[RMDB]
RNA sequence: GGGAACGACUCGAGUAGAGUCGAAAAACAGCGGAAGAUGUGACAGCACCCUUAGUGGAUGAGGGAGCUCCCGGCAAGCAGGCUGCCGCGCAGCCCCACACGGAGAUCCCAGAAGGAACCACAGCUGAGCCAUGUCUUUGUUCGCAAAGACAUGGCUAAAAGAAACAACAACAACAAC
Reactivity to DMS in 0.01 (KOAc 150mM, MgCl2 10mM, bicine 150mM(pH8.5), 24C), signal-to-noise 1, nucleotides 027 to 126: a090c110a010g010c020g000g020a140a040g010a090u000g000u020g000a110c170a030g000c040a120c040c060c060u000u010a050g010u000g020g000a080u040g050a270g000g000g000a080g000c000u000c030c000c060g010g010c100a120a090g000c180a040g030g060c020u000g010c030c170g000c140g000c020a030g010c070c010c010c050a040c170a130c290g030g030a040g000a090u000c000c000c000a060g040a130a110g010g010a090a130c030c030a020c080a160g020c020u020g010